Conditions: 150 mM KOAc, 10 mM MgCl2 and 150 mM bicine (pH 8.5), 24 C. Structure probing data (DMS and 2A3) for a 177-nucleotide construct. 2A3 adducts were read by reverse transcription with SuperScript II with manganese.
RNA sequence: GGGAACGACUCGAGUAGAGUCGAAAAGGCUUAUGAUGCAGGGUCCUGGGUCUGAGACACCAGGCUUCUCCCCUUAUGUGUGAGCCAUGGAAGAGGGUCUAAGGAGACUAAGUGGAGGCCUGAAGCCGCCUGUACACAGCUUCGGCUGUGUACAGGCAAAAGAAACAACAACAACAAC
Reactivity to DMS in 0.01 (KOAc 150mM, MgCl2 10mM, bicine 150mM(pH8.5), 24C), signal-to-noise 1, nucleotides 027 to 126: g010g000c000u000u020a190u070g030a080u010g000c100a040g000g020g010u010c000c040u040g000g020g000u000c000u000g000a250g000a020c080a120c000c000a000g000g000c300u000u000c030u040c000c000c030c100u000u000a060u030g000u020g000u010g030a000g000c000c000a160u000g000g000a120a000g000a200g010g000g000u000c010u000a020a080g000g000a140g000a130c000u010a060a040g040u020g000g040a180g000g000c000c050u000g080a150a180g030c030c040
Reactivity to 2A3 in 0.01 (KOAc 150mM, MgCl2 10mM, bicine 150mM(pH8.5), 24C), signal-to-noise 3, nucleotides 027 to 126: g080g000c000u080u030a080u180g100a060u100g030c070a060g050g000g000u060c010c000u030g000g000g020u030c030u160g120a020g060a090c080a110c090c000a000g010g040c070u210u000c040u020c000c010c000c000u050u090a150u230g020u020g020u040g020a010g000c040c030a070u090g140g000a050a110g010a020g060g030g000u020c020u110a150a000g190g010a080g050a050c030u080a090a020g040u070g060g010a020g000g040c000c040u000g030a010a000g010c020c010